[RMDB]
RNA sequence: GGGAACGACUCGAGUAGAGUCGAAAAAUACUGCACCACUUUGUCAAACUCCGAACUUGCUAGAAUCGAAGAUACCAGGUGCUAGGGCGUAGGGAUAAGCUUUACGCCCGUGACGGAAACAACCGAGACCGACACUCGUGUUCGCACGAGUGUCGGUAAAAGAAACAACAACAACAAC
Reactivity to 2A3 in 0.01 (KOAc 150mM, MgCl2 10mM, bicine 150mM(pH8.5), 24C), signal-to-noise 1, nucleotides 027 to 126: a000u080a000c030u020g020c000a070c090c000a000c050u030u060u030g090u050c010a100a050a140c050u140c070c000g090a150a140c010u000u040g070c000u020a150g060a200a110u000c000g000a040a000g030a000u020a020c000c000a000g110g060u110g020c060u150a080g000g000g000c000g000u000a000g010g010g000a140u020a170a100g180c000u000u000u000a000c000g000c060c000c000g000u030g000a000c000g000g000a000a140a260c130a000a090c050c000g010a040g020